[RMDB]
An RNA of 170 nucleotides, treated with 2A3 and DMS and read out base by base. For 2A3 the reverse transcriptase was SuperScript II with manganese. For 2A3, 6,256 sequencing reads were counted. Values are in units of 0.01, from 0 to 300, in steps of 10. For DMS the reverse transcriptase was MarathonRT. It was measured as part of the RMDB library 15KLIB.

RNA sequence: GGGAACGACUCGAGUAGAGUCGAAAAUUGAAGGUAAAACAGCCUGUGGGUGAAACACACCCACAGGGCCCAUGGGGCGCUAGCACUAUGGUAUCACGGUACCUUUGUGCGCCUGUUUUACCGAAGGAAAGCCAAACCUUCGGGUUUGGCAAAAGAAACAACAACAACAAC
Reactivity to 2A3 in 0.01 (KOAc 150mM, MgCl2 10mM, bicine 150mM(pH8.5), 24C), signal-to-noise 2, nucleotides 027 to 129: u050u060g020a060a000g010g000u000a000a000a000a000c000a020g000c010c000u000g000u000g020g000g000u020g050a090a160a000c120a000c000a000c060c000c000a010c000a000g000g000g000c000c010c030a110u200g040g000g010g070c010g020c080u130a080g000c000a010c000u030a030u070g000g000u000a000u000c010a030c180g120g010u000a000c000c000u040u100u030g010u000g010c030g000c000c000u000g000u020u000u000u000a000c000c000g000a010a000g020g040a020a010a030
Reactivity to DMS in 0.01 (KOAc 150mM, MgCl2 10mM, bicine 150mM(pH8.5), 24C), signal-to-noise 2, nucleotides 027 to 129: u040u090g030a150a150g000g000u020a040a030a000a010c030a000g060c050c020u000g000u000g000g000g050u000g000a140a140a050c300a240c010a000c000c000c030a000c000a000g010g010g000c000c030c000a110u060g000g000g120g000c030g050c080u060a140g080c000a060c020u000a000u010g000g020u020a020u090c010a000c300g060g030u000a000c000c050u020u040u000g040u030g050c040g050c020c000u000g000u020u000u000u000a000c010c010g000a030a060g010g010a060a130a080